Source information:
This 207-nucleotide RNA was probed chemically with 2A3 and DMS. It was measured as part of the RMDB library M2RFPK. Reactivities are given for positions 27 through 156. For DMS, 4,464 sequencing reads were counted.
RNA sequence: GGGAACGACUCGAGUAGAGUCGAAAAAUACAUACUGACACCGGUUGCUCAACAGGCUGUGUGGGACAAUAGAAUAACAAGGCUGUCAAUUUGAGCUUGACGGCUGCUAACCGAAUGGAGUGAAAUCGUAACCGGACUCACUUCGGUGAGUCCGGAACUAGCAGAUAUGAUUCGUCAUAUCUGCUAGAAAAGAAACAACAACAACAAC
Reactivity to 2A3 in 0.01 (KOAc 150mM, MgCl2 10mM, bicine 150mM(pH8.5), 24C), signal-to-noise 4, nucleotides 027 to 156: a000u150a040c060a030u130a030c040u050g070a040c010a010c050c020g050g000u060u040g000c040u050c070a090a100c030a130g040g050c050u040g020u030g000u070g120g020g020a000c020a030a100u120a090g120a100a080u160a130a020c060a090a030g050g010c010u000g000u030c000a000a020u070u110u220g040a020g050c020u010u010g000a010c000g010g000c020u020g010c000u040a070a030c030c040g060a030a080u140g030g020a050g030u090g010a080a010a090u110c070g020u050a050a050c000c010g000g010a000c010u000c000a000c000u000u010c140g050g000u010g010a000g010u000c000c000g000g000a000a000
Reactivity to DMS in 0.01 (KOAc 150mM, MgCl2 10mM, bicine 150mM(pH8.5), 24C), signal-to-noise 3, nucleotides 027 to 156: a110u000a100c030a120u010a180c100u000g000a160c040a120c020c010g020g020u000u010g030c040u010c040a090a080c060a050g030g020c020u010g040u010g030u000g010g030g010a030c040a040a110u000a130g010a110a080u010a090a100c050a060a130g000g020c030u000g020u000c020a030a100u000u000u010g010a140g030c300u000u000g020a040c000g040g010c020u000g010c060u000a070a070c030c020g000a080a120u000g020g000a110g000u000g030a040a080a100u000c050g000u020a090a140c020c010g000g010a060c000u000c000a010c030u000u000c290g040g040u030g000a030g040u000c010c010g010g020a010a040
Conditions: 150 mM KOAc, 10 mM MgCl2 and 150 mM bicine (pH 8.5), 24 C. For 2A3, 2,347 sequencing reads were counted.